Source: RMDB library RFM100, as collected in RNAgym. This 177-nucleotide RNA was probed chemically with 2A3. Conditions: 150 mM KOAc, 10 mM MgCl2 and 150 mM bicine (pH 8.5), 24 C. Values cover nucleotides 27 to 126.
[RMDB]
RNA sequence: GGGAACGACUCGAGUAGAGUCGAAAAACGCGCCACUACGGUGGCGCGAGGGAGUGCGAGGGACCCCGAGGGAGGGCAGGCUGCCCCAGGCCCUGCCCCCUCCAGGAAGCCUUCUCGCUCCAGCCAAACGACUACGUGAAUUCGUUCACGUAGUCGUAAAAGAAACAACAACAACAAC
Reactivity to 2A3 in 0.01 (KOAc 150mM, MgCl2 10mM, bicine 150mM(pH8.5), 24C), signal-to-noise 1, nucleotides 027 to 126: a000c020g000c000g000c020c040a020c000u050a020c300g140g000u000g000g000c010g020c000g010a030g010g000g000a000g000u000g000c030g000a010g020g010g030a080c030c010c010c000g040a070g020g100g010a140g010g040g010c010a000g010g000c070u090g030c030c000c030c090a050g060g000c040c040c000u000g000c020c000c000c000c000u000c010c000a010g000g020a050a060g020c010c010u000u000c000u000c000g000c010u000c000c000a010g030c000c040a090a230